Annotation: Chemical mapping of a 177-nucleotide RNA with 2A3 and DMS. As a SHAPE reagent, 2A3 marks flexible, mostly unpaired nucleotides at the ribose 2'-OH. For DMS the reverse transcriptase was MarathonRT. The DMS profile rests on 3,013 reads. Values cover nucleotides 27 to 126. The 2A3 profile rests on 1,432 reads. The RNA was probed in 150 mM KOAc, 10 mM MgCl2 and 150 mM bicine (pH 8.5) at 24 C.

RNA sequence: GGGAACGACUCGAGUAGAGUCGAAAAACGAUGUCGUUCGCGACAUCGUAAAUAGUAUAACCUUGCUUGAAGUCUACUUGGUUGUAAAGCGAGACAAGUCAGUGAGAGUCCUAUUCGUAGGACUCAACUAAAGGUCAACGUUCGCGUUGACCUUUAGAAAAGAAACAACAACAACAAC
Reactivity to 2A3 in 0.01 (KOAc 150mM, MgCl2 10mM, bicine 150mM(pH8.5), 24C), signal-to-noise 2, nucleotides 027 to 126: a000c010g000a020u000g010u000c010g000u030u030c150g000c000g120a000c010a030u000c000g000u000a000a000a000u100a000g140u070a040u030a200a080c020c010u010u020g030c000u010u010g030a080a010g020u000c000u050a050c070u300u220g080g020u160u000g020u090a020a030a000g070c030g030a000g000a010c020a060a130g090u110c100a030g040u100g180a190g000a000g030u000c010c000u020a050u010u050c140g010u040a000g000g010a000c000u010c000a000a000
Reactivity to DMS in 0.01 (KOAc 150mM, MgCl2 10mM, bicine 150mM(pH8.5), 24C), signal-to-noise 3, nucleotides 027 to 126: a040c010g020a020u020g010u000c000g030u000u010c200g040c000g020a000c000a010u000c000g000u010a010a040a040u010a130g010u020a070u000a090a140c060c020u000u020g030c010u000u010g000a100a120g010u010c010u000a040c040u020u020g010g020u000u000g010u000a070a050a040g010c110g000a040g010a200c060a020a090g000u010c090a070g030u000g010a150g010a010g010u000c000c010u000a020u000u020c150g010u000a000g010g030a000c000u000c010a010a080